[RMDB]
RNA sequence: GGGAACGACUCGAGUAGAGUCGAAAACUGGGCCAGAAGACCCGCGAGAAGGUGAUCGAGGCCGUCAAGGAUAUGGAAGAUCUCCCCGAGAUCGAUGAGGACGACGAGGACGCUGAAGAGCUUGCCGACGAGUACUCGGAACUGAUCUGCGAUGUGGCAUAAGCCAUGCUUUCGAGCAUGGCUUAUGAAAAGAAACAACAACAACAAC
Reactivity to DMS in 0.01 (KOAc 150mM, MgCl2 10mM, bicine 150mM(pH8.5), 24C), signal-to-noise 1, nucleotides 027 to 156: c060u000g010g010g010c030c010a180g120a180a180g000a100c010c000c010g020c070g020a130g010a090a090g000g040u000g060a070u000c010g000a110g030g010c010c070g050u000c060a160a120g010g010a100u010a130u000g000g000a110a110g000a090u000c050u000c010c230c050c040g020a110g000a070u000c070g000a150u000g000a160g000g000a100c000g000a100c000g010a300g060g000a070c100g020c010u000g010a040a150g020a070g000c100u000u000g020c050c020g050a160c080g000a130g010u000a100c010u000c010g010g010a040a070c170u000g010a050u010c020u010g040c040g010a130u010g030u000g010g000
Reactivity to 2A3 in 0.01 (KOAc 150mM, MgCl2 10mM, bicine 150mM(pH8.5), 24C), signal-to-noise 1, nucleotides 027 to 156: c030u010g000g000g030c010c000a000g050a030a010g000a060c000c000c000g050c070g060a140g120a090a100g120g070u040g010a290u080c060g010a080g000g000c060c000g040u080c010a120a120g060g000a140u160a060u270g100g000a020a030g000a030u000c000u040c020c000c120c030g040a030g000a040u060c030g020a020u040g000a100g040g100a040c030g000a000c010g030a030g000g030a030c070g040c030u020g030a000a010g010a100g080c050u090u150g020c080c090g000a060c000g000a000g050u060a190c010u000c060g010g000a070a010c040u010g000a080u040c000u030g040c000g040a030u090g050u100g060g000